Overview
An RNA of 177 nucleotides, treated with 2A3 and DMS and read out base by base. Values are in units of 0.01, from 0 to 300, in steps of 10. For 2A3, 2,388 sequencing reads were counted. For DMS, 2,337 sequencing reads were counted. Conditions: 150 mM KOAc, 10 mM MgCl2 and 150 mM bicine (pH 8.5), 24 C.
RNA sequence: GGGAACGACUCGAGUAGAGUCGAAAAUUGGUGUCUCUACCAGAGAACAUUUCCAAUCAGUUGGUAGUGUUGCUGACGGUGUAGUGAUUGGUUCCAAAAUCGUCACAUUAUGUGGAGAUGCUCCAGAGUAUGCCUAGGCAUUCGUGCCUAGGCAUACAAAAGAAACAACAACAACAAC
Reactivity to 2A3 in 0.01 (KOAc 150mM, MgCl2 10mM, bicine 150mM(pH8.5), 24C), signal-to-noise 2, nucleotides 027 to 126: u080u090g010g000u020g020u000c000u000c000u000a030c020c070a030g000a000g010a130a000c000a010u020u070u000c010c000a000a010u100c080a160g270u030u020g010g000u020a000g000u020g030u030u090g060c040u020g010a030c080g000g010u050g040u090a040g030u040g100a060u150u210g120g050u170u010c070c000a090a070a030a010u020c020g030u010c000a010c010a060u090u180a150u220g020u010g000g000a020g000a010u030g000c000u000c050c020a000g000a000
Reactivity to DMS in 0.01 (KOAc 150mM, MgCl2 10mM, bicine 150mM(pH8.5), 24C), signal-to-noise 3, nucleotides 027 to 126: u010u020g040g010u000g000u000c020u000c010u000a080c070c140a070g010a130g000a000a000c010a050u000u000u010c000c000a010a050u000c240a210g040u000u000g000g000u000a030g030u000g010u000u010g000c090u000g010a160c150g000g030u000g000u020a170g030u000g010a030u010u010g020g010u010u000c100c130a090a100a110a010u020c020g020u000c020a010c050a090u000u010a120u000g020u000g010g000a050g000a040u000g010c040u000c080c080a090g000a300